[RMDB]
RNA sequence: GGGAACGACUCGAGUAGAGUCGAAAAAGGACCUAAUGAAGAACAACCUCUGUUUUCCACUGGGUCAGCCCAGUAUCACCAGGCAACUAGCACUGGUAUUAAGAAGGCGAAUGAACAUCUCACUCUGCCUAGUAAUUCAGUACCACAGGGGGAUGCACGCUAUUUUAGUAUUCGUACUAAAAUAGCGAAAAGAAACAACAACAACAAC
Reactivity to 2A3 in 0.01 (KOAc 150mM, MgCl2 10mM, bicine 150mM(pH8.5), 24C), signal-to-noise 6, nucleotides 027 to 156: a010g120g010a030c020c010u050a110a070u200g050a070a070g060a060a020c020a030a060c040c050u090c080u070g030u020u000u040u040c030c030a020c020u020g000g000g030u070c040a080g020c000c000c000a020g060u080a080u150c040a000c010c010a000g010g020c030a080a090c200u120a080g000c060a050c250u020g020g030u010a020u050u120a040a070g030a030a020g010g010c030g010a010a020u050g020a050a030c040a210u070c030u010c060a030c030u060c030u100g000c010c000u010a020g030u020a010a090u090u090c070a010g060u060a030c030c020a020c040a050g010g000g020g000g010a000u090g050c050a010
Reactivity to DMS in 0.01 (KOAc 150mM, MgCl2 10mM, bicine 150mM(pH8.5), 24C), signal-to-noise 4, nucleotides 027 to 156: a120g010g010a050c010c000u010a010a050u000g010a020a030g010a030a020c020a080a240c130c140u010c130u000g050u000u010u000u010c010c010a040c020u010g030g010g020u010c030a140g000c000c000c020a150g020u000a060u010c060a050c020c020a090g020g030c040a100a060c140u000a070g000c030a080c030u000g010g020u000a030u000u000a060a110g000a130a050g030g030c030g000a080a020u010g010a020a180c160a120u000c140u010c010a030c040u000c020u030g050c010c010u000a110g030u000a050a050u000u000c110a060g020u000a030c020c030a050c070a090g010g020g030g010g020a070u010g000c050a230
Structure probing data (2A3 and DMS) for a 207-nucleotide construct. The RNA was probed in 150 mM KOAc, 10 mM MgCl2 and 150 mM bicine (pH 8.5) at 24 C. The DMS profile rests on 8,174 reads. The data come from the RNA Mapping Database (RMDB), library OK3TST. For 2A3 the reverse transcriptase was SuperScript II with manganese. DMS adducts were read by reverse transcription with MarathonRT. Reactivities are given for positions 27 through 156.